The record gives the reactivity of an RNA of 177 nucleotides to 2A3 and DMS. Values cover nucleotides 27 to 126. Source: RMDB library TTRDEL, as collected in RNAgym.
[RMDB]
RNA sequence: GGGAACGACUCGAGUAGAGUCGAAAAGAUAUGGAUAUUUCAGUAGCUAGGUGAACUCGGAAACGAGUUCCCUUGGACCUACUGAGAAUAUCCUAAGUCAAAAGCGCGUUCGUUCGCGAACGCGCAAGACAAAGGAUAGGUUCGCCUAUCCUUUGUCAAAAGAAACAACAACAACAAC
Reactivity to 2A3 in 0.01 (KOAc 150mM, MgCl2 10mM, bicine 150mM(pH8.5), 24C), signal-to-noise 1, nucleotides 027 to 126: g000a020u070a030u140g000g010a010u010a030u000u010u010c000a000g000u000a010g040c060u010a000g000g030u140g140a010a000c010u010c020g030g040a060a040a030c010g010a000g000u020u000c000c000c010u010u050g040g040a030c000c010u010a010c000u000g010a000g080a050a000u020a000u000c000c000u020a150a040g090u050c030a000a060a080a090g010c040g010c030g020u050u000c030g030u100u170c300g010c030g230a020a010c000g000c000g000c030a000a010
Reactivity to DMS in 0.01 (KOAc 150mM, MgCl2 10mM, bicine 150mM(pH8.5), 24C), signal-to-noise 2, nucleotides 027 to 126: g000a050u000a300u000g020g000a020u000a000u010u000u000c000a010g000u000a010g000c020u010a010g010g010u000g000a020a000c000u000c000g010g000a100a090a220c000g000a000g010u000u000c000c010c000u000u000g010g010a130c300c000u000a000c000u010g000a030g000a020a020u000a010u000c000c010u000a020a070g020u010c040a100a070a080a040g020c010g020c000g000u000u000c000g060u000u020c180g000c000g060a010a000c000g040c000g090c010a000a030